[RMDB]
RNA sequence: GGGAACGACUCGAGUAGAGUCGAAAAAGCGGCAGGAGUGUCUUGCGUUGCGUUUUGCGACGGGGGCAUAUCUGCGGAGUUACAUUUGUUGCUAGAAUAAGCGUGAAUCAUAGUACACCGAGGGUCCGAAUUACUGCUAGUUCGCUAGCAGUAAUUCAAAAGAAACAACAACAACAAC
Reactivity to DMS in 0.01 (KOAc 150mM, MgCl2 10mM, bicine 150mM(pH8.5), 24C), signal-to-noise 3, nucleotides 027 to 126: a090g000c070g000g020c020a030g010g010a160g040u000g010u000c010u000u010g010c010g030u010u000g010c000g010u010u010u010u010g040c020g010a020c000g010g000g010g010g000c000a010u010a060u000c010u010g010c010g020g010a080g010u000u000a070c110a130u010u000u000g020u010u010g000c020u020a080g020a100a100u000a070a080g020c040g000u000g000a070a060u010c080a070u000a100g010u000a050c060a100c050c030g000a070g000g010g000u010c120c130
Reactivity to 2A3 in 0.01 (KOAc 150mM, MgCl2 10mM, bicine 150mM(pH8.5), 24C), signal-to-noise 2, nucleotides 027 to 126: a000g110c070g040g000c060a030g000g150a090g050u000g010u000c000u000u150g270c040g000u000u020g000c010g050u030u080u280u300g000c000g020a000c000g000g000g000g000g020c000a000u010a170u020c000u030g000c010g020g000a040g000u070u140a020c020a090u080u080u200g040u110u150g000c020u070a080g070a300a070u180a100a020g030c030g010u030g050a010a020u060c040a090u060a080g020u030a020c030a000c090c020g020a060g010g050g000u000c050c020
Annotation:
This 177-nucleotide RNA was probed chemically with DMS and 2A3. For DMS, 4,197 sequencing reads were counted. For 2A3 the reverse transcriptase was SuperScript II with manganese. Conditions: 150 mM KOAc, 10 mM MgCl2 and 150 mM bicine (pH 8.5), 24 C. DMS adducts were read by reverse transcription with MarathonRT.